[RMDB]
About this RNA
The record gives the reactivity of an RNA of 207 nucleotides to DMS and 2A3. It was measured as part of the RMDB library M2RFPK. The 2A3 profile rests on 3,161 reads. For DMS the reverse transcriptase was MarathonRT. The DMS profile rests on 2,822 reads.

RNA sequence: GGGAACGACUCGAGUAGAGUCGAAAAGUUAUGCUCUCGCUGCCUAAUGGCGGUGCGGGAAACCCACUCUAAAGUCCUUAGGGUUAGCCCCUUAAGGCCGGGUUCGGAGGCACCUGGCAACAGAAGCUGAAACUGUGCACAUUCGUGUGCACAGUAACACUGUAGACUACUUCGGUAGUCUACAGUGAAAAGAAACAACAACAACAAC
Reactivity to DMS in 0.01 (KOAc 150mM, MgCl2 10mM, bicine 150mM(pH8.5), 24C), signal-to-noise 2, nucleotides 027 to 156: g000u010u040a040u000g030c020u000c010u040c030g000c000u000g030c000c030u020a100a120u020g040g060c050g020g040u000g010c080g020g010g030a040a030a040c020c010c010a100c070u000c090u020a080a080a110g010u020c030c010u000u000a020g020g010g000u010u000a190g000c200c220c000c020u000u000a100a050g010g030c010c050g030g000g030u000u000c060g000g010a230g060g000c110a050c010c030u030g020g010c020a090a100c060a080g010a050a050g000c040u020g000a180a040a050c000u000g000u010g000c020a030c000a040u000u020c300g040u000g000u000g000c000a020c000a000g000u000a010a120
Reactivity to 2A3 in 0.01 (KOAc 150mM, MgCl2 10mM, bicine 150mM(pH8.5), 24C), signal-to-noise 5, nucleotides 027 to 156: g060u100u090a120u260g030c010u020c000u010c020g000c020u020g020c000c020u280a300a140u200g050g010c060g020g060u030g020c020g000g020g020a030a040a020c030c010c020a050c040u150c060u200a130a060a050g120u090c020c000u000u020a010g030g000g010u030u070a050g030c000c000c020c020u010u040a010a040g020g000c010c000g010g000g010u040u090c080g110g010a040g060g030c010a010c010c000u010g030g000c020a060a030c030a070g120a090a010g020c020u040g020a120a070a000c000u000g000u000g000c000a000c000a020u060u070c170g080u060g000u000g020c000a000c000a000g010u000a000a010